[RMDB]
RNA sequence: GGGAACGACUCGAGUAGAGUCGAAAAAUGGUGGAUCCGUCCGGCAAUAUCGGCCAGCGGGCGUCCCCCUCCGCCCCAACGUCGGGCGAUGAUGUCGGCCGCGAUCGAGACCGCGGUCUCCUCGGGGCGGGGGACUCGCAUUCGUGCGAGUCCCCCGAAAAGAAACAACAACAACAAC
Reactivity to 2A3 in 0.01 (KOAc 150mM, MgCl2 10mM, bicine 150mM(pH8.5), 24C), signal-to-noise 1, nucleotides 027 to 126: a010u300g010g030u000g040g020a010u050c010c000g020u000c030c020g000g040c040a090a110u040a020u200c030g140g010c060c030a030g010c070g070g000g000c010g050u110c000c000c000c000c000u070c020c000g000c000c000c000c000a150a080c130g190u200c050g010g000g080c020g000a000u060g020a020u130g010u010c000g000g040c000c000g060c130g030a070u040c020g000a000g030a060c000c000g000c070g000g060u000c000u010c010c000u010c030g000g000g040g010

The record gives the reactivity of an RNA of 177 nucleotides to 2A3. Conditions: 150 mM KOAc, 10 mM MgCl2 and 150 mM bicine (pH 8.5), 24 C. Reactivities are rounded to 0.1 and cut off at 0 and 3. For 2A3, 759 sequencing reads were counted.